[RMDB]
RNA sequence: GGGAACGACUCGAGUAGAGUCGAAAAGGAGGACGAAGCAUAUUUCUGUUUCUGGAGGAUUAUUUAUAAUCUGCCGGAAAGUCUUGCAGGUGGCGGGGAUAUGUUCAGUCUGGUAGAAUUAAGCACGAAAACGUGUCCUUGUUCGCAAGGACACGAAGUACUACAGAGGCUUCGGCCUCUGUAGUACAAAAGAAACAACAACAACAAC
Reactivity to 2A3 in 0.01 (KOAc 150mM, MgCl2 10mM, bicine 150mM(pH8.5), 24C), signal-to-noise 1, nucleotides 027 to 156: g020g020a050g000g030a000c000g040a040a030g000c000a000u060a050u030u120u070c040u040g050u030u100u050c000u000g050g030a050g020g020a000u030u030a050u030u240u100a160u040a080a080u020c010u070g170c100c030g020g000a060a000a000g040u000c030u210u170g040c020a020g140g060u040g000g030c020g000g010g000g020a000u010a000u050g070u050u030c040a000g010u000c000u010g000g000u060a010g050a000a110u260u200a030a000g020c050a040c120g120a040a000a010a040c030g000u000g000u010c000c000u040u000g000u010u070c160g020c110a000a000g000g000a000c000a000c000g000a000a000